Chemical mapping of a 177-nucleotide RNA with DMS and 2A3.
For 2A3, 660 sequencing reads were counted.
Reactivities are rounded to 0.1 and cut off at 0 and 3.
[RMDB]
RNA sequence: GGGAACGACUCGAGUAGAGUCGAAAACUUCUGUUAGCAUGAAUGUGAUCUACUCAGAGAUUUAUGCUUCUUAUGAGGACCUCAAGAGAAAUUAGGUUUAGUAACACAUAGUUUCUGCUUUGUCGAAACUACUCAUGCUCUUCGGAGCAUGAGUAGUAAAAGAAACAACAACAACAAC
Reactivity to DMS in 0.01 (KOAc 150mM, MgCl2 10mM, bicine 150mM(pH8.5), 24C), signal-to-noise 1, nucleotides 027 to 126: c030u000u020c020u010g000u020u010a040g010c070a020u010g030a030a030u010g010u000g120a170u020c070u010a050c200u030c090a090g000a090g010a080u000u000u000a030u000g020c050u000u000c110u000u000a040u010g000a060g020g010a190c050c050u000c110a060a080g050a010g000a050a000a070u000u000a020g010g000u000u010u000a120g010u020a100a050c200a010c020a080u000a010g020u000u000u000c000u010g010c090u000u000u010g000u020c070g020a120a070
Reactivity to 2A3 in 0.01 (KOAc 150mM, MgCl2 10mM, bicine 150mM(pH8.5), 24C), signal-to-noise 1, nucleotides 027 to 126: c010u020u020c010u010g100u090u110a020g050c010a010u000g030a050a000u040g060u060g000a060u070c050u150a070c060u140c190a020g050a000g000a070u000u020u060a020u020g000c000u020u000c030u090u230a120u080g010a030g050g050a070c070c000u080c110a000a000g060a000g020a120a050a000u060u020a030g050g070u020u060u120a210g020u130a090a000c070a010c020a150u010a020g000u010u040u010c010u010g200c020u010u060u130g060u040c020g060a000a080